[RMDB]
Description:
The record gives the reactivity of an RNA of 177 nucleotides to 2A3 and DMS. Reactivities are rounded to 0.1 and cut off at 0 and 3. For DMS the reverse transcriptase was MarathonRT. The DMS profile rests on 4,600 reads.
RNA sequence: GGGAACGACUCGAGUAGAGUCGAAAAUCGGGAUCCCGAUGGAGACGGAUCCACAGGAUCCAAUGGAUCCCGGUGUAGGAUGAGAAGACAGGAUCCGCACUUGUAACGAUCGAUUCGCUCCAUUAACAACGUCGUGUAAAUUCGUUUACACGACGUUAAAAGAAACAACAACAACAAC
Reactivity to 2A3 in 0.01 (KOAc 150mM, MgCl2 10mM, bicine 150mM(pH8.5), 24C), signal-to-noise 4, nucleotides 027 to 126: u070c020g020g040g040a050u020c040c010c020g020a060u060g030g020a040g040a060c030g010g010a000u030c040c030a060c010a060g010g020a010u000c030c000a050a090u110g020g000a000u000c020c000c000g000g000u010g000u030a140g020g060a020u090g050a060g040a260a030g120a050c080a070g100g040a020u020c020c010g020c000a030c010u060u140g070u140a120a030c050g080a140u090c020g010a000u020u040c000g000c020u000c020c020a010u090u090a080a050c050
Reactivity to DMS in 0.01 (KOAc 150mM, MgCl2 10mM, bicine 150mM(pH8.5), 24C), signal-to-noise 5, nucleotides 027 to 126: u010c070g000g000g010a080u000c000c000c170g020a080u000g000g000a050g000a120c090g010g020a010u000c010c080a110c130a100g010g010a040u000c010c010a160a120u010g010g020a020u000c010c000c020g010g000u000g020u000a080g010g000a060u000g010a150g010a100a100g010a100c140a090g000g020a040u000c010c010g020c070a020c060u000u000g030u010a070a090c170g000a080u000c120g010a050u000u000c020g000c010u000c000c020a050u010u000a120a100c210

Values cover nucleotides 27 to 126. The RNA was probed in 150 mM KOAc, 10 mM MgCl2 and 150 mM bicine (pH 8.5) at 24 C. It was measured as part of the RMDB library OK2TST.